This 177-nucleotide RNA was probed chemically with DMS and 2A3. Conditions: 150 mM KOAc, 10 mM MgCl2 and 150 mM bicine (pH 8.5), 24 C.
[RMDB]
RNA sequence: GGGAACGACUCGAGUAGAGUCGAAAAUCUCGUUAAGGAUCGAGAAGGUUGGUGAUAGGGUACAUUAUUCUUAUGGAGCUGGUGUCGCCUACCAACAUGAUAUCGCUGACAUCCAAUCUUGGAUGAAAAUGACGUGAUUGUUCGCAAUCACGUCAUUAAAAGAAACAACAACAACAAC
Reactivity to DMS in 0.01 (KOAc 150mM, MgCl2 10mM, bicine 150mM(pH8.5), 24C), signal-to-noise 3, nucleotides 027 to 126: u000c000u000c020g020u000u010a100a100g000g030a070u010c030g000a060g020a070a230g010g020u000u000g000g020u010g000a110u000a090g020g000g010u000a070c040a020u010u000a100u000u000c110u010u000a080u000g000g000a100g030c280u020g000g030u010g000u000c070g040c000c010u000a090c010c020a050a130c060a050u030g010a110u000a050u010c000g020c090u020g000a220c010a010u000c000c010a030a120u020c300u000u010g010g000a020u010g000a010a040
Reactivity to 2A3 in 0.01 (KOAc 150mM, MgCl2 10mM, bicine 150mM(pH8.5), 24C), signal-to-noise 3, nucleotides 027 to 126: u020c010u000c010g000u030u120a120a080g090g010a060u080c030g020a020g010a100a060g040g010u020u020g020g040u080g050a140u090a130g070g000g000u030a040c010a030u040u130a110u140u100c070u060u150a070u180g100g020a100g030c040u040g030g170u120g030u060c040g010c000c000u000a020c000c010a020a020c000a030u080g020a040u020a010u070c060g010c230u050g010a020c010a020u000c000c010a030a120u070c110u140u150g030g000a030u010g000a080a020